[RMDB]
RNA sequence: GGGAACGACUCGAGUAGAGUCGAAAAUUUUCGGAAUUGCGAAAGAACAUUAUCGUAAAUACGCGGAAUGGUUAAGGAGUAACUGUGGGGGUGUCCCCCACGUUUGAAAUCUCAACCCGUUCCGAGUUCAUAGACAUGUAUUCGUACAUGUCUAUGAAAAAGAAACAACAACAACAAC
Reactivity to 2A3 in 0.01 (KOAc 150mM, MgCl2 10mM, bicine 150mM(pH8.5), 24C), signal-to-noise 6, nucleotides 027 to 126: u030u020u030u070c030g050g080a150a130u110u070g030c010g030a050a070a070g100a110a050c050a170u170u160a130u220c010g010u040a040a110a040u190a080c080g000c010g040g010a010a010u010g000g050u050u090a100a040g070g020a040g010u040a070a020c080u190g000u050g020g030g020g010g020u180g160u170c000c000c000c000c020a000c000g010u000u010u040g030a040a040a040u020c020u010c010a010a030c010c010c010g000u000u010c000c000g000a020g020u000
Reactivity to DMS in 0.01 (KOAc 150mM, MgCl2 10mM, bicine 150mM(pH8.5), 24C), signal-to-noise 7, nucleotides 027 to 126: u000u000u000u010c020g010g010a120a120u010u000g010c010g010a040a080a080g010a140a130c190a090u010u000a110u010c030g010u010a040a050a070u010a080c080g000c010g010g000a020a020u000g010g010u010u000a120a140g000g000a060g010u000a020a020c030u010g060u000g010g000g010g010g020u010g000u010c060c000c000c000c000a000c000g000u000u000u000g000a040a090a100u000c000u000c020a050a140c300c000c030g010u000u000c000c000g010a060g010u010